This 207-nucleotide RNA was probed chemically with 2A3 and DMS. Values cover nucleotides 27 to 156. As a SHAPE reagent, 2A3 marks flexible, mostly unpaired nucleotides at the ribose 2'-OH. It was measured as part of the RMDB library RNAMAK. Conditions: 150 mM KOAc, 10 mM MgCl2 and 150 mM bicine (pH 8.5), 24 C. The DMS profile rests on 17,942 reads.

[RMDB]
RNA sequence: GGGAACGACUCGAGUAGAGUCGAAAAUUUCAGUUCGCUGAAAGACCGUCCUAAGUCCAGAGCUUGGACCGUUUCCUUGCAUCGAUCUAUUCGGAAACGAAUAGGGAGCAAGUGAAACGCUAGCUCUGGAUAUGGAAUCGCGGAGUUUCGACUCCAAUAAAAUAGGUAUGUUCGCAUACCUAUUUUAAAAAGAAACAACAACAACAAC
Reactivity to 2A3 in 0.01 (KOAc 150mM, MgCl2 10mM, bicine 150mM(pH8.5), 24C), signal-to-noise 8, nucleotides 027 to 156: u010u010u000c010a020g020u040u120c160g030c090u010g000a020a020a020g080a080c010c030g070u040c000c000u060a120a080g040u000c000c000a000g010a010g010c020u100u130g070g080a290c100c030g000u000u010u010c000c000u020u000g020c050a260u300c090g070a030u010c030u010a000u000u000c000g050g040a100a110a090c000g000a010a000u000a000g000g010g010a020g000c000a000a000g030u060g290a000a010a000c000g000c000u000a000g010c000u000c010u000g000g000a000u000a000u010g000g020a020a060u160c120g010c120g120g010a020g010u060u120u190c120g120a030c010u000c000c000a010a070
Reactivity to DMS in 0.01 (KOAc 150mM, MgCl2 10mM, bicine 150mM(pH8.5), 24C), signal-to-noise 5, nucleotides 027 to 156: u010u000u020c030a050g030u000u000c240g040c000u000g000a060a060a070g010a110c050c020g030u000c010c000u000a090a300g020u000c010c010a010g010a040g020c010u000u010g100g000a070c180c020g000u010u010u000c000c000u000u010g020c000a300u010c110g000a050u010c000u000a020u000u000c000g010g000a170a110a300c010g030a020a010u000a010g010g000g010a060g020c010a010a020g010u020g010a010a020a010c010g020c010u000a020g010c010u000c000u010g000g030a010u000a020u000g010g000a060a050u010c120g000c110g000g000a080g010u000u000u000c120g010a090c000u000c000c010a050a300